[RMDB]
RNA sequence: GGGAACGACUCGAGUAGAGUCGAAAAGAUAUGGAUAGCGAAGAACUACACACCAUCGAUCUCGGAAACGAGGGAGGUGGGUAGGGAGCUAUCCUAAGUCAAAGUUUUGUUCUUCGGAACAAAACAACUCUUAGUCACACUUCGGUGUGACUAAGAGAAAAGAAACAACAACAACAAC
Reactivity to DMS in 0.01 (KOAc 150mM, MgCl2 10mM, bicine 150mM(pH8.5), 24C), signal-to-noise 1, nucleotides 027 to 126: g030a070u000a300u020g000g000a030u000a000g000c010g030a140a230g000a100a200c010u000a020c050a060c060a300c000c010a110u000c170g000a300u000c000u050c000g000g050a110a070a100c050g000a020g000g000g000a050g000g040u000g020g000g010u000a000g000g010g000a050g010c040u000a050u000c000c000u010a000a020g030u010c030a150a090a130g020u000u020u020u000g010u010u020c000u000u010c140g060g000a060a020c010a000a000a000a000c000a110a170
Reactivity to 2A3 in 0.01 (KOAc 150mM, MgCl2 10mM, bicine 150mM(pH8.5), 24C), signal-to-noise 1, nucleotides 027 to 126: g040a000u080a030u170g000g010a000u000a010g000c030g210a300a010g060a160a000c020u040a010c020a010c040a040c080c000a110u300c040g100a100u000c010u000c000g020g010a120a100a060c020g010a010g020g000g000a030g000g000u030g020g000g020u010a010g000g010g020a020g000c020u000a000u000c000c010u020a110a000g010u030c030a150a150a100g000u000u010u020u000g000u000u010c030u060u040c220g140g000a000a000c000a010a010a000a010c000a000a020
Structure probing data (DMS and 2A3) for a 177-nucleotide construct. Conditions: 150 mM KOAc, 10 mM MgCl2 and 150 mM bicine (pH 8.5), 24 C. For 2A3, 1,976 sequencing reads were counted. Values cover nucleotides 27 to 126.